[RMDB]
RNA sequence: GGGAACGACUCGAGUAGAGUCGAAAAAGUGCCAAGGUGAUGAAGGUCCUGGGGAACCCCAAGAGUGAUGACCUGAAGUCCCGGCAUGUGGACUUCAAGACUUUCCUGCCCAUGCUCCAGGCAGCAGCCAUGAAGAAUCGUUCGCGAUUCUUCAUGGAAAAGAAACAACAACAACAAC
Reactivity to DMS in 0.01 (KOAc 150mM, MgCl2 10mM, bicine 150mM(pH8.5), 24C), signal-to-noise 3, nucleotides 027 to 126: a070g020u010g020c040c020a060a110g020g000u000g000a100u000g010a130a110g010g000u000c010c030u000g000g000g000g000a100a120c100c020c010c060a090a090g000a100g010u010g010a070u000g010a100c060c070u010g000a030a000g000u000c000c010c010g010g020c210a070u000g010u010g010g000a030c000u000u000c020a030a050g010a120c080u000u010u010c060c020u010g000c030c020c040a090u000g000c040u000c010c030a080g000g000c070a070g000c210a110g000
Reactivity to 2A3 in 0.01 (KOAc 150mM, MgCl2 10mM, bicine 150mM(pH8.5), 24C), signal-to-noise 2, nucleotides 027 to 126: a000g120u080g020c000c020a040a070g080g030u080g030a120u090g030a080a060g040g030u020c010c040u020g010g000g000g060a110a130c020c010c000c020a020a020g030a030g110u100g070a090u100g040a050c010c020u020g000a010a000g010u000c000c010c020g040g020c090a040u180g060u200g000g000a000c000u000u020c050a080a020g000a030c020u080u090u040c040c000u040g000c000c020c000a030u110g020c010u030c000c010a000g020g000c000a000g000c040a010g050